[RMDB]
RNA sequence: GGGAACGACUCGAGUAGAGUCGAAAAAUAAGUCCUUUCGAGGACUUAUAAUGCUGCCCAAAGAGGACCUGGGGGUGUCUCGGCUGCUAAACUCAUCAGCCGUGGCUUUGGGGUUCGCCCCAAAGAACAUAUUGCGUUCUUUCGAGAACGCAAUAUGAAAAGAAACAACAACAACAAC
Reactivity to 2A3 in 0.01 (KOAc 150mM, MgCl2 10mM, bicine 150mM(pH8.5), 24C), signal-to-noise 2, nucleotides 027 to 126: a000u000a000a000g000u000c010c010u020u020u100c220g110a020g000g000a010c010u000u000a000u000a010a040u110g030c060u090g020c000c000c000a060a130a020g130a040g030g040a040c020c020u030g010g010g030g030g000u050g080u010c010u000c010g000g010c000u010g000c000u120a160a140a190c050u100c100a080u030c000a050g000c010c010g020u010g040g020c000u010u020u030g000g000g010g000u020u060c160g110c010c000c010c000a000a020a000g000a010a000
Reactivity to DMS in 0.01 (KOAc 150mM, MgCl2 10mM, bicine 150mM(pH8.5), 24C), signal-to-noise 4, nucleotides 027 to 126: a010u000a000a000g010u000c000c000u000u000u020c170g030a020g010g010a020c000u000u000a000u000a030a090u010g020c180u010g010c020c000c010a080a090a130g010a100g020g000a050c030c040u000g000g000g010g000g020u010g020u000c020u000c020g010g000c020u000g020c150u000a050a090a110c160u000c110a060u000c020a030g010c020c010g020u000g000g000c010u000u000u000g020g010g010g010u000u010c190g020c000c000c010c010a000a010a010g000a110a190

Structure probing data (2A3 and DMS) for a 177-nucleotide construct. The data come from the RNA Mapping Database (RMDB), library M2PK50. The reactions ran in a buffer of 150 mM KOAc, 10 mM MgCl2 and 150 mM bicine (pH 8.5), at 24 C.